[RMDB]
An RNA of 207 nucleotides, treated with 2A3 and DMS and read out base by base.
For 2A3 the reverse transcriptase was SuperScript II with manganese.
The DMS profile rests on 3,768 reads.
The reactions ran in a buffer of 150 mM KOAc, 10 mM MgCl2 and 150 mM bicine (pH 8.5), at 24 C.
RNA sequence: GGGAACGACUCGAGUAGAGUCGAAAAAUGCAGGUUUGACUUCAUAUGUAUGCCUUGGCAUGACGUCAACUUUACUUUUAUUUCAGUUCUGGUGAUGCUUGUGCUCCUGAUACUAGCGUACAGAAGGAGAUGGCGCCGUUUGACUGUUUGUGGCGGCAUCGCCGCACAACUUCGGUUGUGCGGCGAUAAAAGAAACAACAACAACAAC
Reactivity to 2A3 in 0.01 (KOAc 150mM, MgCl2 10mM, bicine 150mM(pH8.5), 24C), signal-to-noise 3, nucleotides 027 to 156: a010u140g020c060a050g080g060u090u140u120g130a060c020u000u060c070a050u120a050u230g060u040a060u060g010c020c010u080u100g050g030c010a010u000g000a010c010g020u000c000a010a010c050u090u110u070a070c060u070u070u130u230a290u080u200u130c070a030g040u010u010c010u030g040g040u020g030a020u030g000c090u020u010g000u030g040c000u080c070c040u060g050a090u040a190c050u040a020g020c020g020u030a010c020a020g010a070a040g050g030a080g010a040u040g030g020c010g000c010c000g000u000u020u090g110a090c050u040g040u070u070u010g060u030g020g010c000g000g000c010
Reactivity to DMS in 0.01 (KOAc 150mM, MgCl2 10mM, bicine 150mM(pH8.5), 24C), signal-to-noise 2, nucleotides 027 to 156: a050u020g000c040a080g030g040u000u000u010g030a130c030u020u010c040a150u000a180u000g000u010a000u000g040c050c050u010u020g040g000c040a040u000g000a050c030g020u010c010a030a020c020u010u000u010a040c040u000u010u000u000a110u020u040u000c150a110g020u000u010c020u010g020g030u000g000a070u010g040c030u000u000g040u010g010c010u000c060c030u000g000a220u000a060c090u020a060g010c060g000u000a120c040a080g000a130a100g010g020a140g010a100u000g020g020c000g010c020c020g010u000u000u030g010a070c070u010g020u000u000u000g000u020g000g020c040g010g030c090